[RMDB]
An RNA of 177 nucleotides, treated with DMS and 2A3 and read out base by base. 2A3 adducts were read by reverse transcription with SuperScript II with manganese. The RNA was probed in 150 mM KOAc, 10 mM MgCl2 and 150 mM bicine (pH 8.5) at 24 C. High 2A3 reactivity points to a flexible backbone, as in loops and unpaired stretches. It was measured as part of the RMDB library OK2TRN.
RNA sequence: GGGAACGACUCGAGUAGAGUCGAAAAGGGAACGCCAGGUGCUCAAGUCGACGGCGGGGAACAUUACUCGCUGCGUGGUCCCCCGUAGCGCCUCCUUCUGCCAGCACACCUUUGUGCACAAGCUGCCUCUAUGCCUAGACUUCGGUCUAGGCAUAGAAAAAGAAACAACAACAACAAC
Reactivity to DMS in 0.01 (KOAc 150mM, MgCl2 10mM, bicine 150mM(pH8.5), 24C), signal-to-noise 2, nucleotides 027 to 126: g020g000g000a070a030c140g020c030c050a060g000g020u020g000c020u000c050a080a120g010u000c010g030a100c080g010g020c050g010g000g000g000a070a070c160a060u010u000a110c060u000c050g020c030u000g020c080g040u000g010g000u010c020c000c000c130c060g000u010a050g030c020g020c150c020u000c060c010u000u000c020u000g020c020c000a140g010c030a050c050a080c180c080u000u010u010g030u000g000c000a100c130a090a080g000c060u010g000c100c050
Reactivity to 2A3 in 0.01 (KOAc 150mM, MgCl2 10mM, bicine 150mM(pH8.5), 24C), signal-to-noise 1, nucleotides 027 to 126: g000g000g000a050a040c020g070c040c000a070g000g100u070g000c000u000c080a050a010g120u070c030g060a070c060g090g010c000g010g000g000g000a070a020c020a070u090u180a130c070u020c090g120c070u100g020c030g080u130g040g090u110c020c050c010c010c010g040u030a010g040c000g100c010c000u000c000c000u030u140c120u090g000c000c000a070g040c040a020c000a060c030c090u090u160u130g000u060g000c060a010c010a040a010g020c020u010g030c030c000